[RMDB]
RNA sequence: GGGAACGACUCGAGUAGAGUCGAAAAAGGAGUUGAACGUACCCGCGAUAUACACCUCCUGGGCAUCGGGGUCUUCAUAGACCCAGGUGACGGUGACCGUCUGUCCAUCCUCCUCCAGUGUCCAGGACACUCAGAGCUGAUUCGUCAGCUCUGAGUGAAAAGAAACAACAACAACAAC
Reactivity to 2A3 in 0.01 (KOAc 150mM, MgCl2 10mM, bicine 150mM(pH8.5), 24C), signal-to-noise 2, nucleotides 027 to 126: a010g080g010a040g030u100u080g080a160a030c020g010u070a090c020c000c000g070c030g040a050u100a010u020a210c060a050c060c010u000c000c000u000g000g010g000c020a010u030c040g020g020g000g000u020c000u170u060c050a120u100a160g010a020c000c000c010a000g000g000u020g010a050c010g020g030u070g130a200c000c060g030u060c000u060g050u020c020c010a050u040c050c010u020c010c000u060c000c000a030g040u000g010u070c000c020a030g010g000a000
Reactivity to DMS in 0.01 (KOAc 150mM, MgCl2 10mM, bicine 150mM(pH8.5), 24C), signal-to-noise 2, nucleotides 027 to 126: a100g000g000a050g010u010u000g010a070a080c080g020u010a100c050c020c040g000c040g010a160u030a090u000a110c080a060c060c080u000c010c000u010g020g010g000c010a000u000c050g010g020g020g010u010c000u000u020c270a070u020a060g020a020c000c000c010a020g000g000u000g000a030c030g000g020u000g010a130c110c080g000u000c050u020g000u000c030c090a100u000c010c020u000c030c000u000c000c010a130g010u010g000u000c010c020a070g000g020a150